[RMDB]
RNA sequence: GGGAACGACUCGAGUAGAGUCGAAAAGAAAGGCAGCCAGUGCAGCCCACGAAGCCAAUCGAGGCAUGCUUUUGCAUGCCGCCCACGACUGAGGGCAGCUGCGGCACUGAGGGCAGCUGCCGAAAGAGAUGAUAGCCCUAUUCGUAGGGCUAUCAUCAAAAGAAACAACAACAACAAC
Reactivity to 2A3 in 0.01 (KOAc 150mM, MgCl2 10mM, bicine 150mM(pH8.5), 24C), signal-to-noise 2, nucleotides 027 to 126: g020a040a030a020g020g000c010a030g000c010c010a000g000u020g030c010a070g120c040c090c000a020c110g040a060a010g000c010c000a020a010u040c020g000a060g000g000c000a010u010g020c010u200u300u220u300g000c010a000u000g000c010c010g000c000c000c000a040c060g100a050c040u200g090a130g060g060g000c000a000g000c020u010g010c000g040g050c020a010c050u080g010a210g060g060g010c000a010g010c000u020g030c020c000g000a010a000a000g080a000
Reactivity to DMS in 0.01 (KOAc 150mM, MgCl2 10mM, bicine 150mM(pH8.5), 24C), signal-to-noise 3, nucleotides 027 to 126: g000a040a050a300g000g010c000a020g000c060c030a050g000u000g020c050a160g000c070c050c050a230c100g000a100a100g040c010c020a070a290u000c050g000a110g010g010c000a010u010g000c000u010u010u000u010g030c020a000u000g010c000c010g010c020c010c040a160c140g010a090c100u030g000a150g000g000g000c010a050g000c060u000g000c050g000g030c050a030c060u020g000a140g000g000g000c020a040g010c020u000g000c000c010g000a010a050a070g000a160